[RMDB]
RNA sequence: GGGAACGACUCGAGUAGAGUCGAAAACUCUUUCGCUCACACGCACGGCGCCUCCCCCACAGUUCUCCGAUUCCAAUUUUCCGCAAGGAAUGUCAUCGCGACCGCCCCGCCGGUGUCUGGACACCCGAUACGAAGUUGUAUUCGUACAACUUCGUAUAAAAGAAACAACAACAACAAC
Reactivity to DMS in 0.01 (KOAc 150mM, MgCl2 10mM, bicine 150mM(pH8.5), 24C), signal-to-noise 9, nucleotides 027 to 126: c050u010c040u000u010u010c060g020c020u010c050a080c090a110c090g010c060a070c080g010g010c040g000c040c020u000c020c010c010c020c030a050c110a090g000u010u000c020u000c020c030g000a100u010u010c040c040a070a090u020u010u010u000c010c010g010c190a100a100g000g000a030a030u010g010u020c060a050u010c040g000c050g010a060c050c040g010c020c010c020c030g020c050c020g000g020u010g010u000c030u010g010g000a120c110a090c010c020c050g010
Reactivity to 2A3 in 0.01 (KOAc 150mM, MgCl2 10mM, bicine 150mM(pH8.5), 24C), signal-to-noise 9, nucleotides 027 to 126: c020u020c000u030u090u070c050g010c020u040c020a060c000a010c060g050c010a030c040g040g010c010g010c010c020u030c000c000c000c010c000a040c010a030g030u050u020c030u000c020c020g040a050u070u030c020c000a050a060u060u040u070u040c020c010g030c060a050a020g030g020a050a020u060g050u050c030a060u060c040g030c020g050a040c010c010g020c000c000c000c000g000c010c000g010g020u030g020u010c030u050g040g010a010c010a030c030c000c000g010